[RMDB]
RNA sequence: GGGAACGACUCGAGUAGAGUCGAAAAAAAAGAUAUGGACGCUUAACUUCCUUGGAUUUAUAGGCUAAUAUGGUCGGAAACGACCAUAGAAAGCCUAUUGUCAGGAAGAGAGCGUCCUAAGUCAAAAGAUUAUCAAUCUCUUCGGAGAUUGAUAAUCAAAAGAAACAACAACAACAAC
Reactivity to DMS in 0.01 (KOAc 150mM, MgCl2 10mM, bicine 150mM(pH8.5), 24C), signal-to-noise 2, nucleotides 027 to 126: a090a120a150a020g010a030u010a300u020g020g000a010c010g030c000u010u010a090a130c010u010u010c000c000u020u040g040g020a030u000u000u000a010u010a000g000g010c000u020a040a300u000a000u000g010g000u000c010g000g000a090a100a160c010g020a010c000c010a000u000a000g000a110a100a010g020c000c010u000a000u000u000g000u030c010a040g010g000a020a000g030a300g010a020g010c030g000u000c000c000u000a020a100g020u000c010a090a050a140a110
Reactivity to 2A3 in 0.01 (KOAc 150mM, MgCl2 10mM, bicine 150mM(pH8.5), 24C), signal-to-noise 1, nucleotides 027 to 126: a000a020a010a010g100a090u160a090u110g000g000a010c010g000c040u230u090a300a230c040u000u140c010c010u070u170g090g030a070u150u300u080a050u040a010g010g000c010u000a030a080u010a110u010g000g000u000c000g020g050a040a040a060c040g010a000c000c040a000u000a000g000a020a060a010g000c000c020u000a000u010u010g000u000c010a000g000g020a010a000g040a010g000a000g010c000g010u000c000c000u000a000a010g000u010c000a070a030a030a100